[RMDB]
RNA sequence: GGGAACGACUCGAGUAGAGUCGAAAAUAUGGAGCCAUCACUUUCUUAUGAUGUCAAUUUCCGGUCGACAGAUCUCAGAGCGAGAUACAGUGACCAGGAGUUCACUCUGCCUUGAGCUUCCGUCAGGGACGUAUAUGCAGUUCGCUGCAUAUACGUCAAAAGAAACAACAACAACAAC
Reactivity to DMS in 0.01 (KOAc 150mM, MgCl2 10mM, bicine 150mM(pH8.5), 24C), signal-to-noise 4, nucleotides 027 to 126: u000a110u010g000g010a210g010c130c010a030u010c010a050c160u010u000u010c200u020u010a130u000g000a030u000g010u000c070a070a070u000u000u000c000c020g000g000u000c000g000a120c190a110g010a030u000c000u000c020a150g030a140g020c270g000a020g000a010u000a050c070a100g020u010g010a020c020c000a080g030g000a080g010u000u000c040a030c030u000c010u000g020c080c040u000u000g010a030g010c030u000u000c010c020g000u000c090a100g020g010
Reactivity to 2A3 in 0.01 (KOAc 150mM, MgCl2 10mM, bicine 150mM(pH8.5), 24C), signal-to-noise 5, nucleotides 027 to 126: u250a100u100g100g040a040g060c020c010a010u010c010a010c060u190u300u140c050u150u300a070u130g020a010u030g000u030c030a060a090u060u100u000c010c010g010g010u030c030g080a030c020a030g040a030u000c000u010c010a140g050a070g280c080g050a000g020a000u080a140c040a040g020u010g070a010c010c020a010g000g030a010g010u000u030c000a010c010u000c000u010g020c020c020u010u030g000a010g010c010u010u000c020c010g090u060c070a030g110g120